[RMDB]
This 177-nucleotide RNA was probed chemically with DMS and 2A3. The 2A3 profile rests on 1,054 reads. It was measured as part of the RMDB library M2PK90.

RNA sequence: GGGAACGACUCGAGUAGAGUCGAAAAACUUUUAGCGUUUGCAAGACGCUGUUCUUGCAAUGAUCUGGAUUUAGCGCACGGAGGUCCGAAAUCCAGAUCAACAUUUCGGACCUCCGCGGUAAUAAAAACGCAGUUGAAUAUUCGUAUUCAACUGCGUAAAAGAAACAACAACAACAAC
Reactivity to DMS in 0.01 (KOAc 150mM, MgCl2 10mM, bicine 150mM(pH8.5), 24C), signal-to-noise 2, nucleotides 027 to 126: a050c060u010u020u000u010a110g000c050g020u000u000u020g000c000a030a010g000a020c030g020c220u010g020u000u000c000u000u000g000c000a010a020u000g000a090u010c060u000g020g020a140u000u000u000a050g000c140g000c030a080c060g000g000a010g010g020u000c000c000g010a010a020a020u000c090c150a130g010a140u000c170a030a040c190a060u000u000u000c000g000g000a020c000c000u000c000c000g000c020g000g000u000a050a090u010a060a070a080a060
Reactivity to 2A3 in 0.01 (KOAc 150mM, MgCl2 10mM, bicine 150mM(pH8.5), 24C), signal-to-noise 1, nucleotides 027 to 126: a000c000u040u110u100u070a040g060c000g080u020u050u100g030c040a000a000g010a000c080g060c300u100g050u130u020c000u000u020g010c000a010a010u060g040a040u080c060u130g100g000a070u010u030u160a060g030c040g000c030a020c090g020g000a010g020g010u000c010c030g020a010a010a000u040c040c050a020g040a170u040c000a000a000c010a020u030u010u000c010g010g000a000c010c030u000c010c000g000c000g010g050u000a010a080u050a220a120a000a020